Source information: This 207-nucleotide RNA was probed chemically with 2A3. The reactions ran in a buffer of 150 mM KOAc, 10 mM MgCl2 and 150 mM bicine (pH 8.5), at 24 C. For 2A3 the reverse transcriptase was SuperScript II with manganese. As a SHAPE reagent, 2A3 marks flexible, mostly unpaired nucleotides at the ribose 2'-OH. The 2A3 profile rests on 523 reads.
RNA sequence: GGGAACGACUCGAGUAGAGUCGAAAACGGCAAUUCUACGAACGAAAACGCAACGAAGGCAAAAGACACAACGCCGCAGUCGUCGCGCUCGCACGCCGACGCCUCAACGUCUUAUUCGCCAUGAUGCGCAGCGGAGAACUCUACCGAGACACCCCCAUCCAUAGCCUAGUUUCGACUAGGCUAUGGAAAAAGAAACAACAACAACAAC
Reactivity to 2A3 in 0.01 (KOAc 150mM, MgCl2 10mM, bicine 150mM(pH8.5), 24C), signal-to-noise 1, nucleotides 027 to 156: c000g010g020c070a010a100u170u060c060u240a100c010g120a160a020c040g000a080a130a040a030c050g020c050a060a050c100g100a190a070g000g000c050a000a000a000a000g050a000c000a000c010a070a140c070g040c070c010g030c090a000g020u000c000g000u010c000g060c060g010c050u160c140g090c050a060c050g000c020c010g080a000c000g010c010c010u060c080a020a020c010g000u000c000u010u150a300u220u110c090g000c010c020a060u280g010a020u030g010c030g000c030a000g160c000g020g000a100g050a040a040c090u020c000u000a000c000c020g030a010g020a000c010a060c000c000c000c000c000a030